[RMDB]
RNA sequence: GGGAACGACUCGAGUAGAGUCGAAAAACAAAACGGACUUAAAUACCUACAGCUGGUCCUCAUAGGUGUUCCAUUGCAGUGCACUUUAGUGCCCUGGAUGGCACCUGGCCACCUGUCAGGUUUUUGUAUUCACUCCUUGUUUCGACAAGGAGUGAAUAAAAGAAACAACAACAACAAC
Reactivity to DMS in 0.01 (KOAc 150mM, MgCl2 10mM, bicine 150mM(pH8.5), 24C), signal-to-noise 2, nucleotides 027 to 126: a080c040a100a060a040a050c160g020g010a060c150u000u000a020a030a010u000a000c000c000u000a010c010a010g000c200u000g000g030u020c010c300u000c180a120u050a020g000g000u000g000u040u030c010c000a000u000u010g020c000a000g030u000g050c000a030c000u000u000u070a130g010u000g000c000c020c000u000g000g000a020u000g010g010c020a000c000c000u000g020g000c000c000a020c200c000u000g000u000c110a000g000g010u010u020u010u000u000g030u010
Reactivity to 2A3 in 0.01 (KOAc 150mM, MgCl2 10mM, bicine 150mM(pH8.5), 24C), signal-to-noise 6, nucleotides 027 to 126: a020c080a010a100a010a010c080g100g060a040c050u210u300a040a070a010u140a070c000c000u000a000c010a010g010c010u000g010g010u140c020c050u180c070a190u250a050g000g020u020g060u210u090c010c000a000u020u070g100c000a010g000u000g040c000a010c000u160u230u300a070g000u010g000c020c020c000u010g020g020a000u000g000g000c000a000c000c000u000g010g000c010c000a000c000c000u020g020u060c140a010g000g000u010u010u000u000u040g010u000